[RMDB]
RNA sequence: GGGAACGACUCGAGUAGAGUCGAAAAUGAUGAAUGCCGUUGGGUUUUCCUGUGCAUUGAAAAGGUGAGUUUGGACAUCUUCCUGCUCACUAAAAGGAUGAACAUUGACCAUUUUGGGAGGCUAUGUCCAGGAAGUCAUGCUUCAGGGAGCCCAGAACCCUAAUAGGUCGUUCGCGACCUAUUAGGGAAAAGAAACAACAACAACAAC
Reactivity to 2A3 in 0.01 (KOAc 150mM, MgCl2 10mM, bicine 150mM(pH8.5), 24C), signal-to-noise 2, nucleotides 027 to 156: u110g020a040u090g020a100a110u130g070c130c120g060u160u120g040g010g000u200u130u110u290c030c010u010g010u040g000c010a000u170u300g000a070a060a020a020g020g000u040g030a020g000u300u300u150g010g000a010c030a150u010c110u090u050c000c000u000g020c000u000c000a000c000u010a020a020a000a030g050g040a010u060g070a040a000c030a020u040u090g120a250c040c030a080u090u150u080u240g130g050g020a140g030g000c030u010a110u050g000u050c020c000a010g070g090a090a000g090u030c020a010u000g000c000u040u030c000a000g000g000g000a000g000c000c000c000a010g020a000a010
Overview
Source: RMDB library OK3TST, as collected in RNAgym. The record gives the reactivity of an RNA of 207 nucleotides to 2A3. For 2A3 the reverse transcriptase was SuperScript II with manganese. The reactions ran in a buffer of 150 mM KOAc, 10 mM MgCl2 and 150 mM bicine (pH 8.5), at 24 C. Reactivities are given for positions 27 through 156.